RNA sequence: GGGAACGACUCGAGUAGAGUCGAAAAUCUGCCUCUCAGAGAUUUAUAAUCUAAGACAGGUGUCAGUAGUGCAGGUGCUUGUAAAAUGAUGCAUACAAACAUUGCAUUUUAAUAGGUUUACCGUUCUCACAGCAGUUCAGGUUAAGGAUCGGUACCACUAAAUCCAUUAUUUCGAUAAUGGAUUUAGAAAAGAAACAACAACAACAAC
Reactivity to 2A3 in 0.01 (KOAc 150mM, MgCl2 10mM, bicine 150mM(pH8.5), 24C), signal-to-noise 5, nucleotides 027 to 156: u020c020u050g010c030c000u030c010u020c040a040g050a000g020a120u070u190u060a250u210a190a080u060c040u050a080a000g050a060c040a050g070g000u030g070u060c030a030g030u090a020g010u050g060c020a020g000g040u020g010c040u060u080g040u070a020a090a110a090u150g060a020u060g030c030a030u050a110c090a040a180a020c040a070u040u030g010c000a030u030u030u070u180a200a180u180a110g020g050u080u110u060a020c020c010g000u040u000c020u010c000a110c020a050g070c010a030g030u220u150c060a080g080g080u070u120a100a020g010g010a030u040c020g000g000u020a010c000c000a000
Reactivity to DMS in 0.01 (KOAc 150mM, MgCl2 10mM, bicine 150mM(pH8.5), 24C), signal-to-noise 3, nucleotides 027 to 156: u000c000u010g010c030c010u000c040u010c050a110g010a120g000a120u000u000u000a120u010a150a170u010c020u000a130a090g010a040c020a040g020g050u000g010u000c080a130g030u010a080g030u000g030c020a100g060g040u000g020c020u010u000g020u000a020a050a090a140u000g010a100u000g020c100a180u000a300c030a030a050a080c060a090u010u010g000c000a050u020u000u000u000a040a180u000a100g010g020u000u000u010a040c030c010g020u000u000c000u000c040a160c090a130g020c040a100g020u000u010c110a090g030g020u010u010a060a060g010g010a040u000c030g020g000u000a040c010c020a110
Structure probing data (2A3 and DMS) for a 207-nucleotide construct. Reactivities are given for positions 27 through 156. The 2A3 profile rests on 2,830 reads. For 2A3 the reverse transcriptase was SuperScript II with manganese. As a SHAPE reagent, 2A3 marks flexible, mostly unpaired nucleotides at the ribose 2'-OH. The data come from the RNA Mapping Database (RMDB), library OK3TST. The RNA was probed in 150 mM KOAc, 10 mM MgCl2 and 150 mM bicine (pH 8.5) at 24 C.